Source information: Structure probing data (2A3 and DMS) for a 177-nucleotide construct. Source: RMDB library RFMREP, as collected in RNAgym. The RNA was probed in 150 mM KOAc, 10 mM MgCl2 and 150 mM bicine (pH 8.5) at 24 C.

[RMDB]
RNA sequence: GGGAACGACUCGAGUAGAGUCGAAAAAAGGAAUUAGCGUGCCUUCAUGCUAAGGGUUUGAUAUCUGCUAAAACCCGGUGCAUUCAUCAAUGCAGGUUAAGCCAAAGGGAUGUCCCGACCGGAGGCCGAAAUGAAAUUAGUUCGCUAAUUUCAUUUCAAAAGAAACAACAACAACAAC
Reactivity to 2A3 in 0.01 (KOAc 150mM, MgCl2 10mM, bicine 150mM(pH8.5), 24C), signal-to-noise 5, nucleotides 027 to 126: a000a000g110g000a050a050u060u030a070g030c040g030u030g030c030c060u110u200c040a020u050g000c010u010a020a040g020g000g020u000u020u010g020a020u030a040u070c030u030g010c010u040a030a020a000a020c000c000c010g020g020u070g030c020a060u040u110c010a060u070c040a100a130u130g010c000a010g060g010u060u120a090a010g000c000c000a010a010a010g020g010g000a010u040g020u020c010c000c000g000a000c000c000g000g000a010g000g010c000c010
Reactivity to DMS in 0.01 (KOAc 150mM, MgCl2 10mM, bicine 150mM(pH8.5), 24C), signal-to-noise 9, nucleotides 027 to 126: a070a050g010g010a060a080u000u000a060g010c070g040u000g010c170c080u010u000c100a060u000g000c010u000a190a120g010g010g000u000u000u000g000a180u000a040u000c020u000g010c020u010a210a030a010a010c000c000c010g020g010u000g010c070a040u000u000c100a080u010c150a070a070u010g010c010a010g000g010u000u020a100a120g010c010c010a010a300a160g000g000g010a040u010g000u000c000c000c000g000a050c010c000g000g000a300g000g010c020c240